RNA sequence: GGGAACGACUCGAGUAGAGUCGAAAAGAUAUGGAUGGUGGCGAUAAGAUAAUGGUCGGAAACGACCACUAUCUUUUGACGCCAGAAGUCCUAAGUCAAAACCCUGCGACGUUCGCGUCGCAGGGAACGUUAAUGGAAACUUCGGUUUCCAUUAACGAAAAGAAACAACAACAACAAC
Reactivity to DMS in 0.01 (KOAc 150mM, MgCl2 10mM, bicine 150mM(pH8.5), 24C), signal-to-noise 4, nucleotides 027 to 126: g000a020u000a300u020g000g010a020u000g000g010u010g000g010c000g020a120u000a040a010g000a000u000a000a010u000g010g010u000c000g020g010a030a070a180c010g000a010c000c000a000c010u000a000u000c000u000u000u010u010g000a200c040g010c010c000a020g000a290a260g000u000c000c000u000a040a170g010u000c030a100a100a090a140c000c000c010u010g010c000g000a020c010g020u000u010c210g010c020g000u000c000g000c000a000g010g000g000a000a000
Reactivity to 2A3 in 0.01 (KOAc 150mM, MgCl2 10mM, bicine 150mM(pH8.5), 24C), signal-to-noise 2, nucleotides 027 to 126: g020a020u060a020u120g000g010a010u050g010g300u010g030g000c020g020a100u040a220a070g010a000u010a020a030u010g000g010u000c010g010g020a070a010a040c010g000a000c000c000a000c000u000a000u000c000u000u070u040u140g100a030c010g000c000c000a000g020a010a010g000u000c010c000u020a090a020g060u020c020a010a010a090a300c000c010c000u020g010c010g030a010c000g010u050u090c300g000c030g110u020c000g000c010a010g000g000g000a000a000